[RMDB]
RNA sequence: GGGAACGACUCGAGUAGAGUCGAAAAGGGUUCCCUGGCAGCGCUGCAACGGAAUCCAGUGCCCACCGGAGCGCCAGUUCGUGCGAGAGUAGCUUCGGCUUCUUCUUCGUGGAACGGCUCCGCGUGUACAUUCAUAAAUCUUCGGAUUUAUGAAUGUAAAAGAAACAACAACAACAAC
Reactivity to DMS in 0.01 (KOAc 150mM, MgCl2 10mM, bicine 150mM(pH8.5), 24C), signal-to-noise 6, nucleotides 027 to 126: g010g010g010u000u000c000c000c080u000g010g010c010a070g010c270g010c170u000g010c030a050a070c300g000g000a030a020u000c010c010a070g010u000g010c020c010c000a070c020c000g000g000a010g000c010g000c210c010a050g000u000u000c010g030u010g010c020g010a030g000a030g010u000a020g010c000u000u010c200g030g000c010u000u000c010u010u000c030u010u010c010g030u000g010g000a010a000c000g000g000c010u000c000c000g000c120g000u010g010u000
Reactivity to 2A3 in 0.01 (KOAc 150mM, MgCl2 10mM, bicine 150mM(pH8.5), 24C), signal-to-noise 7, nucleotides 027 to 126: g020g000g000u000u010c000c000c010u030g140g000c040a100g090c150g110c300u090g000c020a050a030c030g000g000a000a010u000c010c010a020g060u050g070c010c000c000a000c010c000g010g010a010g000c030g040c080c030a130g030u010u020c050g110u130g060c010g000a010g000a000g010u040a000g000c000u030u030c240g100g000c010u010u010c040u110u010c000u060u100c010g010u030g020g000a000a000c000g000g010c000u000c000c000g000c050g000u030g010u000